[RMDB]
RNA sequence: GGGAACGACUCGAGUAGAGUCGAAAAGACAUUUUCCAUGUACUUGAAACGUGUGGGGUACACCUCUUCUUCUUUUUCCUUCUCUGAGCAAUGGCUAGAAGAAAAGCCCUACUUGUUUGUAGCAUUUACUGUGAGCCAUUACUGAAUGUGGGUGUAAUGACUCAUUACUGUUCGCAGUAAUGAGUCAAAAAGAAACAACAACAACAAC
Reactivity to 2A3 in 0.01 (KOAc 150mM, MgCl2 10mM, bicine 150mM(pH8.5), 24C), signal-to-noise 3, nucleotides 027 to 156: g070a020c050a030u090u090u030u060c050c050a050u080g030u050a090c070u040u150g120a060a080a020c020g010u020g020u040g020g000g000g000u060a050c020a030c050c020u080c000u040u000c010u020u070c000u030u130u070u070u080c010c000u100u150c070u010c050u110g080a060g010c040a050a050u070g040g000c020u010a010g010a060a000g000a010a100a000a000g030c010c020c000u020a040c010u060u150g060u110u040u080g080u050a000g030c020a040u030u050u080a070c050u050g030u070g080a000g000c000c000a040u090u080a050c080u090g080a110a080u140g020u040g030g060g000u040g000u040a050a070
Reactivity to DMS in 0.01 (KOAc 150mM, MgCl2 10mM, bicine 150mM(pH8.5), 24C), signal-to-noise 2, nucleotides 027 to 156: g000a110c040a110u000u000u020u000c060c060a190u020g000u000a070c080u000u000g010a120a090a110c070g020u010g000u010g010g020g060g020u010a060c040a070c070c040u000c010u020u000c020u000u000c070u000u020u020u010u000c040c040u000u000c040u010c050u000g000a140g010c070a050a070u000g010g000c070u000a060g030a060a070g000a080a040a050a110g000c040c060c010u000a080c050u000u000g010u000u010u020g000u000a100g040c030a090u000u010u000a090c040u000g000u010g010a070g040c000c030a000u000u000a060c050u020g040a060a070u000g010u000g010g010g010u000g000u000a060a130

Chemical mapping of a 207-nucleotide RNA with 2A3 and DMS. 2A3 adducts were read by reverse transcription with SuperScript II with manganese. The reactions ran in a buffer of 150 mM KOAc, 10 mM MgCl2 and 150 mM bicine (pH 8.5), at 24 C. DMS (dimethyl sulfate) methylates the pairing face of unpaired adenines and cytosines.